[RMDB]
Chemical mapping of a 177-nucleotide RNA with DMS and 2A3.
Values cover nucleotides 27 to 126.
The 2A3 profile rests on 715 reads.
The reactions ran in a buffer of 150 mM KOAc, 10 mM MgCl2 and 150 mM bicine (pH 8.5), at 24 C.
2A3 adducts were read by reverse transcription with SuperScript II with manganese.
DMS adducts were read by reverse transcription with MarathonRT.
RNA sequence: GGGAACGACUCGAGUAGAGUCGAAAAAGGCAACAAAUGUAGCAACAUUGCUUAAUUUUUUCUUGAUUCAUUUUACGAUACUCUCCUUUUAUAUUUACUGUAUAGGAUGAACAGUAAUCAAUGUAUAGCUAUCAUGAGGUUUCGACCUCAUGAUAGCAAAAGAAACAACAACAACAAC
Reactivity to DMS in 0.01 (KOAc 150mM, MgCl2 10mM, bicine 150mM(pH8.5), 24C), signal-to-noise 1, nucleotides 027 to 126: a060g000g000c050a020a040c130a010a120a050u000g000u040a130g050c110a120a190c050a060u000u010g000c040u020u020a040a000u000u000u000u000u000u000c010u000u010g000a130u000u000c010a030u000u000u000u010a060c060g010a090u040a060c190u000c020u010c010c000u000u000u020u000a030u000a050u000u000u000a090c180u000g020u010a110u010a030g000g000a020u000g010a020a050c100a100g000u000a000a020u000c180a040a020u000g010u000a130u000a140
Reactivity to 2A3 in 0.01 (KOAc 150mM, MgCl2 10mM, bicine 150mM(pH8.5), 24C), signal-to-noise 1, nucleotides 027 to 126: a000g040g070c010a070a070c010a090a150a060u160g010u090a050g090c030a000a100c050a130u070u090g000c000u020u070a080a130u100u130u100u030u000u000c030u090u160g040a110u080u140c020a070u010u030u020u110a020c030g060a000u000a130c030u050c010u000c010c020u270u060u060u000a030u030a010u070u120u170a070c000u010g010u040a010u020a070g000g070a060u080g030a050a000c080a090g000u030a020a020u050c090a050a000u050g060u060a070u100a040